[RMDB]
This 177-nucleotide RNA was probed chemically with 2A3 and DMS.
The reactions ran in a buffer of 150 mM KOAc, 10 mM MgCl2 and 150 mM bicine (pH 8.5), at 24 C.
RNA sequence: GGGAACGACUCGAGUAGAGUCGAAAAAAAGAUAUGGAUUAUCCUACCCACCUUCGACAGCUGCUAUGAAGCAGAGUCGGAAACGACUCUGUGGAGCAGCGUCGAAGAGGGAUAAUCCUAAGUCAAACCCUAUCAUCCAGUUCGCUGGAUGAUAGGGAAAAGAAACAACAACAACAAC
Reactivity to 2A3 in 0.01 (KOAc 150mM, MgCl2 10mM, bicine 150mM(pH8.5), 24C), signal-to-noise 1, nucleotides 027 to 126: a000a000a070g090a020u100a050u110g000g010a010u000u000a000u040c000c020u040a210c050c030c020a040c000c010u000u020c000g030a060c060a300g020c010u000g000c000u070a190u300g080a020a000g000c000a000g010a000g020u000c010g020g000a000a030a000c000g000a000c000u030c000u050g020u040g000g000a000g000c000a010g000c000g000u000c010g010a010a000g000a010g040g000g020a000u000a000a000u000c010c010u000a000a000g060u030c050a080a000a300
Reactivity to DMS in 0.01 (KOAc 150mM, MgCl2 10mM, bicine 150mM(pH8.5), 24C), signal-to-noise 2, nucleotides 027 to 126: a130a080a110g010a010u010a100u010g030g020a030u000u000a000u000c000c010u000a220c050c050c100a300c090c010u000u000c000g000a020c010a140g100c000u000g030c010u000a150u030g030a100a210g000c010a020g010a010g020u000c000g030g000a040a030a030c000g000a010c000u010c010u010g000u000g000g000a020g040c010a030g020c010g000u000c000g010a000a000g000a040g000g010g000a010u010a000a000u000c010c000u000a020a100g000u000c060a080a080a160
Description
Values cover nucleotides 27 to 126. The 2A3 profile rests on 2,225 reads. DMS (dimethyl sulfate) methylates the pairing face of unpaired adenines and cytosines.